[RMDB]
RNA sequence: GGGAACGACUCGAGUAGAGUCGAAAAUCGGUGUGAACAUGUAUGGGGUCUUUGUGCGGAUUCUGACUGAGCGUUCACAGAGGAAGGCGUUCCUGCAGGCCCGGAGCUGCAUUGAGGACCGACUGAGGCAUCGUACUACGUUCGCGUAGUACGAUGCAAAAGAAACAACAACAACAAC
Reactivity to 2A3 in 0.01 (KOAc 150mM, MgCl2 10mM, bicine 150mM(pH8.5), 24C), signal-to-noise 1, nucleotides 027 to 126: u090c030g040g030u090g010u020g080a000a000c020a070u080g010u110a150u140g100g040g010g000u000c000u100u070u110g110u130g060c060g050g110a070u020u020c010u060g060a120c020u080g030a040g060c050g010u080u030c030a020c030a080g130a020g120g060a100a060g030g000c040g000u050u010c010c020u080g010c040a020g090g000c040c050c100g010g000a050g000c060u050g050c010a060u010u150g030a030g070g020a030c000c030g030a040c030u040g090a020g130
Reactivity to DMS in 0.01 (KOAc 150mM, MgCl2 10mM, bicine 150mM(pH8.5), 24C), signal-to-noise 1, nucleotides 027 to 126: u010c050g020g010u010g000u000g000a050a010c080a120u020g000u010a050u000g020g010g000g000u000c010u010u000u000g000u000g020c100g010g000a090u000u010c010u000g000a090c040u010g010a070g010c090g010u000u000c040a040c030a100g010a170g000g010a070a020g010g020c070g020u000u000c010c020u010g000c060a140g000g030c010c020c020g000g030a080g030c030u000g030c000a070u010u010g010a110g010g000a150c070c030g000a070c050u000g000a180g000